[RMDB]
RNA sequence: GGGAACGACUCGAGUAGAGUCGAAAAUUCUUCUUUUGCUAGCAGGAUAUUUGGGUUUUAGGCAAAAGGCUCAGGCACAUAAAUACUAUGUACUCUUCUAAACAACGACUUUGGCGUACUCCACAAACAGAUACACCCCCAGUUGAAUAAACCCGUCCAUAUACUUCGGGUUCGCCCGAAGUAUAUGAAAAGAAACAACAACAACAAC
Reactivity to DMS in 0.01 (KOAc 150mM, MgCl2 10mM, bicine 150mM(pH8.5), 24C), signal-to-noise 2, nucleotides 027 to 156: u000u000c020u010u000c030u000u000u000u010g010c010u000a090g040c060a100g030g050a100u000a060u000u000u020g030g000g000u000u000u000u000a060g020g020c090a070a080a060a070g010g040c030u010c230a060g010g010c010a010c000a040u000a030a090a120u000a080c100u000a060u010g020u010a030c100u010c050u000u000c020u000a050a030a090c060a010a100c000g020a060c010u000u000u000g020g040c030g020u000a060c060u000c000c010a090c030a040a030a120c040a070g000a130u000a110c040a180c050c000c010c000c040a080g010u000u010g010a100a130u000a090a050a070c040c010c000g030u010c040
Reactivity to 2A3 in 0.01 (KOAc 150mM, MgCl2 10mM, bicine 150mM(pH8.5), 24C), signal-to-noise 2, nucleotides 027 to 156: u030u000c010u010u040c000u000u080u070u110g070c050u030a060g040c050a050g010g080a120u100a200u170u140u180g060g010g000u170u050u060u090a030g010g000c000a050a100a010a010g000g000c010u020c100a040g000g030c000a010c010a020u090a020a090a040u120a070c060u060a050u170g040u040a060c020u060c010u190u080c030u100a000a140a210c000a040a030c080g080a040c030u010u020u030g010g000c000g000u010a040c010u000c020c000a030c030a100a100a030c020a090g100a040u080a080c040a080c040c050c040c000c010a000g020u020u020g040a030a060u050a090a040a000c000c000c000g020u030c000
This 207-nucleotide RNA was probed chemically with DMS and 2A3. For DMS the reverse transcriptase was MarathonRT. Source: RMDB library OK3TST, as collected in RNAgym. The RNA was probed in 150 mM KOAc, 10 mM MgCl2 and 150 mM bicine (pH 8.5) at 24 C. For 2A3, 660 sequencing reads were counted. 2A3 adducts were read by reverse transcription with SuperScript II with manganese. Values cover nucleotides 27 to 156.